[RMDB]
RNA sequence: GGGAACGACUCGAGUAGAGUCGAAAAGAUAUGGACCGCGACAUGCCUUUGUGUCGGAAACGACACUUAGGCAACAGCGUCGGUCCUAAGUCAAAGUCUUGGUUCACGUUCGCGUGAACCAAGACAAUCUGGGAGAAGAGUUCGCUCUUCUCCCAGAAAAAGAAACAACAACAACAAC
Reactivity to 2A3 in 0.01 (KOAc 150mM, MgCl2 10mM, bicine 150mM(pH8.5), 24C), signal-to-noise 1, nucleotides 027 to 126: g020a010u070a040u160g000g000a010c010c010g000c000g020a140c070a100u090g020c000c020u040u020u060g000u010g000u000c020g020g010a100a040a000c010g000a000c000a020c020u000u020a000g000g000c000a010a000c020a010g090c010g150u300c040g000g000u000c000c000u010a090a040g030u010c090a140a180a000g000u010c000u020u000g000g000u000u000c000a000c030g060u080u050c300g030c020g120u000g000a010a000c000c000a000a000g010a020c000a010a010
Reactivity to DMS in 0.01 (KOAc 150mM, MgCl2 10mM, bicine 150mM(pH8.5), 24C), signal-to-noise 2, nucleotides 027 to 126: g010a040u000a300u010g010g000a000c000c000g010c000g040a110c130a240u000g000c010c000u000u000u020g000u010g040u010c000g020g020a070a040a150c000g000a020c000a000c000u000u010a010g030g030c010a000a030c280a150g020c010g000u010c000g010g000u000c000c000u000a010a040g000u000c010a100a170a180g010u000c000u010u010g000g000u010u000c000a000c000g000u010u040c150g010c000g040u000g000a030a000c000c000a020a000g000a010c000a020a020